[RMDB]
RNA sequence: GGGAACGACUCGAGUAGAGUCGAAAAGCCGCUUCGACCUCGAGCGGGCGAGCUGGCACGACGCGAGAUUCGGGAACGGAACACCGGUCGAGAUCAAGAGCACGAUGCACGAACACGCGGACGGCCAAUGCACCGUCCAAUUCGUUGGACGGUGCAUAAAAGAAACAACAACAACAAC
Reactivity to DMS in 0.01 (KOAc 150mM, MgCl2 10mM, bicine 150mM(pH8.5), 24C), signal-to-noise 1, nucleotides 027 to 126: g060c040c030g020c050u000u010c090g020a050c010c010u010c010g000a110g050c110g050g000g040c110g000a080g020c050u010g000g020c020a160c080g010a100c040g020c070g010a110g000a300u000u050c030g000g000g040a110a110c040g050g000a030a100c230a130c010c040g000g020u000c050g000a050g010a080u000c020a110a100g000a130g000c020a050c020g020a080u000g010c040a160c030g010a020a090c100a180c050g010c150g020g000a100c070g000g010c040c050a070
Reactivity to 2A3 in 0.01 (KOAc 150mM, MgCl2 10mM, bicine 150mM(pH8.5), 24C), signal-to-noise 1, nucleotides 027 to 126: g040c000c000g000c030u080u170c020g240a260c020c020u070c040g040a040g070c070g000g000g080c030g000a040g020c060u070g000g020c050a060c070g030a040c000g000c040g050a050g070a120u010u120c050g000g000g030a140a040c080g000g010a070a120c120a090c100c000g090g060u100c020g010a040g000a090u080c010a080a040g050a030g100c060a010c120g080a000u110g010c080a030c110g030a070a020c060a000c100g030c030g010g040a070c000g000g040c020c010a030
Source: RMDB library OK2TRN, as collected in RNAgym. An RNA of 177 nucleotides, treated with DMS and 2A3 and read out base by base. DMS (dimethyl sulfate) methylates the pairing face of unpaired adenines and cytosines. The RNA was probed in 150 mM KOAc, 10 mM MgCl2 and 150 mM bicine (pH 8.5) at 24 C.